[RMDB]
RNA sequence: GGGAACGACUCGAGUAGAGUCGAAAAGAAAAAGUCGUCGAGUCCGGAGAAUAUCGAGUAGUGGAUACGAUCCGGAGAGUAUCGACUACAAGAUAGAGACGAAAGUCUCGAUCGAGACGACGAAAAAGGGUAUAUUUUGGUUCGCCAAAAUAUACCCAAAAGAAACAACAACAACAAC
Reactivity to 2A3 in 0.01 (KOAc 150mM, MgCl2 10mM, bicine 150mM(pH8.5), 24C), signal-to-noise 2, nucleotides 027 to 126: g090a010a120a040a010a000g040u000c000g000u000c010g030a030g090u020c030c030g100g020a060g120a110a050u050a000u040c010g000a030g020u020a000g010u050g110g010a010u000a000c020g040a070u060c030c030g050g000a040g010a000g040u030a000u060c070g130a010c000u000a000c000a000a000g000a000u030a000g010a000g000a000c010g070a010a010a010g010u000c020u000c020g010a050u020c010g010a040g000a040c020g000a000c000g010a060a010a000a000a000
Reactivity to DMS in 0.01 (KOAc 150mM, MgCl2 10mM, bicine 150mM(pH8.5), 24C), signal-to-noise 3, nucleotides 027 to 126: g000a090a060a130a130a060g020u000c020g030u000c000g000a240g040u000c040c070g010g000a120g050a130a190u000a000u000c010g000a300g020u000a010g010u000g000g030a000u000a000c010g000a100u010c080c070g030g000a020g000a280g020u000a000u020c010g000a010c060u010a000c020a050a240g010a000u000a030g000a010g020a000c000g020a100a070a100g000u000c000u000c020g000a060u020c030g000a210g020a020c060g000a020c010g010a040a020a120a070a060
Conditions: 150 mM KOAc, 10 mM MgCl2 and 150 mM bicine (pH 8.5), 24 C. This 177-nucleotide RNA was probed chemically with 2A3 and DMS. For DMS, 3,122 sequencing reads were counted. For 2A3 the reverse transcriptase was SuperScript II with manganese. Source: RMDB library OK1LIB, as collected in RNAgym.